Source: RMDB library OK3TST, as collected in RNAgym. Structure probing data (DMS and 2A3) for a 207-nucleotide construct. For 2A3, 2,307 sequencing reads were counted. The reactions ran in a buffer of 150 mM KOAc, 10 mM MgCl2 and 150 mM bicine (pH 8.5), at 24 C. Reactivities are given for positions 27 through 156.
RNA sequence: GGGAACGACUCGAGUAGAGUCGAAAACGAAGCCCACAUUGGCGAGGGCAGGAUGAACAUCGUGAUCUUCUCAUAACCAUUGCUCAUGGUCAGGUUAAGCGUAUUGGCGGGACUUGGUUGUCAGUGCGGACGAGCGGCCAUCUGUGCUUCCAUACGGGGACAAUAUUCGAUUCGUCGAAUAUUGUCCAAAAGAAACAACAACAACAAC
Reactivity to DMS in 0.01 (KOAc 150mM, MgCl2 10mM, bicine 150mM(pH8.5), 24C), signal-to-noise 1, nucleotides 027 to 156: c040g010a100a150g000c010c000c040a140c070a190u010u000g020g010c020g020a090g000g010g040c110a050g000g010a060u020g010a030a080c010a110u000c100g020u000g020a060u000c040u010u000c030u000c020a130u000a080a150c040c000a120u000u000g020c070u020c060a200u000g010g010u020c040a080g010g000u000u000a110a130g020c060g030u010a070u000u010g010g010c000g020g010g010a060c040u000u010g050g000u000u020g020u010c060a110g040u000g020c040g000g040a060c160g020a180g010c020g020g000c000c050a070u000c000u000g010u000g020c010u000u010c030c020a150u040a080c050g000g000
Reactivity to 2A3 in 0.01 (KOAc 150mM, MgCl2 10mM, bicine 150mM(pH8.5), 24C), signal-to-noise 4, nucleotides 027 to 156: c040g050a030a020g040c000c050c010a030c030a090u090u110g020g020c050g020a060g000g000g020c040a040g050g010a050u100g050a100a010c030a080u080c070g090u040g050a060u040c040u110u030c050u020c020a050u120a080a010c010c030a050u050u190g030c020u010c070a030u050g020g020u010c030a020g030g020u060u080a050a010g010c010g000u050a080u080u100g030g020c000g000g020g020a060c050u090u110g070g000u050u100g040u050c050a020g030u020g090c060g030g030a030c030g010a040g020c010g010g000c020c000a030u020c060u080g040u030g020c030u070u010c010c010a050u110a080c100g070g040